[RMDB]
RNA sequence: GGGAACGACUCGAGUAGAGUCGAAAAUAUUCAUCUUGCAAUCCUGGACAUUUCAUGUAAAUAGAAUCAGACAAUGUAGUCUUGCAAGUGGUUUCUUUCACUUAGUGUAAUGUGUUCAGUGUUGUGGCAGUGGGUACCGAUUCGUCGGUACCCACUGAAAAGAAACAACAACAACAAC
Reactivity to DMS in 0.01 (KOAc 150mM, MgCl2 10mM, bicine 150mM(pH8.5), 24C), signal-to-noise 1, nucleotides 027 to 126: u000a080u020u000c040a090u020c070u010u000g000c030a010a030u000c260c010u030g010g000a020c000a030u000u000u000c080a070u010g000u020a040a140a080u000a100g010a110a090u000c100a040g010a030c100a120a100u010g020u010a070g030u010c110u010u000g020c150a030a070g020u010g020g010u010u010u000c060u000u000u000c020a050c080u000u000a050g000u020g020u000a070a030u000g000u000g010u000u000c040a020g000u000g050u010u000g010u000g010g000
Reactivity to 2A3 in 0.01 (KOAc 150mM, MgCl2 10mM, bicine 150mM(pH8.5), 24C), signal-to-noise 1, nucleotides 027 to 126: u140a040u070u130c020a000u050c060u090u030g010c020a030a000u000c000c000u060g020g000a000c000a000u050u030u100c020a020u200g120u160a040a090a070u190a120g110a050a020u120c000a110g070a070c020a030a070u180g080u120a070g060u040c080u020u060g080c010a070a000g020u000g000g020u040u140u050c060u030u130u010c020a000c000u000u080a030g000u020g020u060a060a120u130g020u020g000u030u000c010a010g000u000g070u050u000g070u020g010g020